[RMDB]
RNA sequence: GGGAACGACUCGAGUAGAGUCGAAAAGUAGCGCUUGAGGUGCUUGAUCGUCGGGGUCGAUAGGCUGUGUGCCUCCUCGAUGAUCAGCAGGUGGCGCGAGCCUGCGGUGUGGCUGGCCUUCAGAGCCGGCCAUCAGGGUUUUCGAACCCUGAUGGCCAAAAGAAACAACAACAACAAC
Reactivity to DMS in 0.01 (KOAc 150mM, MgCl2 10mM, bicine 150mM(pH8.5), 24C), signal-to-noise 2, nucleotides 027 to 126: g000u000a280g010c020g020c010u000u000g010a100g010g000u000g010c010u000u000g010a010u000c010g030u000c000g010g000g000g010u020c220g030a130u010a010g020g020c010u010g010u000g010u010g010c000c000u000c000c010u000c010g020a000u010g010a000u000c010a000g000c020a010g000g010u010g010g000c020g020c010g010a110g000c020c020u000g000c160g010g000u010g000u010g010g010c020u010g000g010c010c030u000u000c190a160g000a160g030c040c040
Reactivity to 2A3 in 0.01 (KOAc 150mM, MgCl2 10mM, bicine 150mM(pH8.5), 24C), signal-to-noise 3, nucleotides 027 to 126: g020u020a020g020c030g020c080u090u160g110a100g150g100u030g050c000u070u220g020a000u000c010g010u010c010g020g020g000g100u100c110g180a180u180a080g020g000c020u060g090u110g110u240g300c000c000u030c000c000u010c000g000a000u020g010a010u010c020a000g000c000a000g000g090u060g010g000c040g010c010g000a000g010c000c000u010g060c040g050g050u080g000u020g070g020c010u000g050g020c010c010u080u130c090a070g010a030g160c010c000